[RMDB]
This 177-nucleotide RNA was probed chemically with DMS and 2A3. For 2A3, 976 sequencing reads were counted.
RNA sequence: GGGAACGACUCGAGUAGAGUCGAAAAACGCAGAAAUCGAGGUGAUGAAGAUGUACAUGCAACUGCCUGUGCAUGAGGGCGGAAUCAUCUCCCAUGUUCUGUCUGAGGGUGCGGUGUUCCAGCCAGGGGCACAAGCGUGAUUCGUCACGCUUGUGCCAAAAGAAACAACAACAACAAC
Reactivity to DMS in 0.01 (KOAc 150mM, MgCl2 10mM, bicine 150mM(pH8.5), 24C), signal-to-noise 1, nucleotides 027 to 126: a100c070g030c030a040g000a000a020a020u000c090g020a040g020g000u000g010a030u000g000a210a080g000a070u000g020u050a060c030a000u000g000c010a160a060c200u000g000c060c040u000g020u000g040c020a000u000g000a190g000g000g000c060g050g000a220a040u000c030a050u000c020u000c000c010c130a090u000g060u000u000c030u000g000u000c080u040g000a060g040g050g000u000g000c030g020g010u010g000u000u000c050c020a080g000c030c090a100g080g010
Reactivity to 2A3 in 0.01 (KOAc 150mM, MgCl2 10mM, bicine 150mM(pH8.5), 24C), signal-to-noise 1, nucleotides 027 to 126: a000c030g000c010a030g010a070a000a000u150c070g020a060g130g020u030g010a020u000g020a060a050g020a070u080g000u130a040c030a000u020g000c040a150a120c180u080g040c050c030u030g000u030g000c010a010u010g020a150g040g150g010c030g020g030a020a040u000c000a010u020c010u070c040c000c000a060u180g090u010u030c050u050g070u070c110u150g070a030g000g030g050u060g000c030g000g080u010g060u070u020c040c020a010g000c000c040a000g040g020